[RMDB]
RNA sequence: GGGAACGACUCGAGUAGAGUCGAAAAUGCGUCGGAAGAGGAUGUUGUUGGCUCCGGCGAGUUCGAGGGCUUUGGUGGUGUCGCCGUCGUUGAGGCCGGUGGCUUCUGCUACGGCGCCGCGGACGAUGAUUUUGGAACCUGCGGUGACGUAGAGGCAGGGUAAAUAAUACUUCGGUAUUAUUUACCCAAAAGAAACAACAACAACAAC
Reactivity to DMS in 0.01 (KOAc 150mM, MgCl2 10mM, bicine 150mM(pH8.5), 24C), signal-to-noise 1, nucleotides 027 to 156: u000g020c020g050u000c020g040g000a080a080g010a050g020g010a110u000g000u000u010g010u010u000g000g010c030u000c060c050g020g010c010g030a080g040u010u000c050g030a130g030g030g000c030u000u010u000g040g020u000g020g000u000g010u000c050g030c040c030g000u000c030g010u000u000g010a100g020g020c040c010g000g020u000g040g030c010u010u000c010u000g010c030u000a020c000g010g000c010g000c000c000g040c020g000g000a060c020g000a250u020g020a300u000u000u000u000g020g000a070a090c020c010u010g020c000g040g030u000g010a020c010g050u000a030g020a060g030g060c050a230
Reactivity to 2A3 in 0.01 (KOAc 150mM, MgCl2 10mM, bicine 150mM(pH8.5), 24C), signal-to-noise 4, nucleotides 027 to 156: u120g000c010g020u050c020g050g050a100a040g020a060g090g020a070u080g010u030u000g020u000u030g040g000c020u010c020c000g020g010c050g010a070g040u020u080c040g010a060g000g040g010c000u100u120u120g050g000u050g030g020u040g010u050c010g000c030c000g100u020c010g010u010u060g060a140g060g060c020c040g040g030u080g010g000c000u050u010c030u070g050c000u000a000c000g010g000c000g000c000c000g000c000g010g000a050c090g060a060u210g030a060u080u160u220u260g110g020a080a090c010c010u050g010c000g000g010u010g000a010c000g000u000a000g000a020g050g000c090a060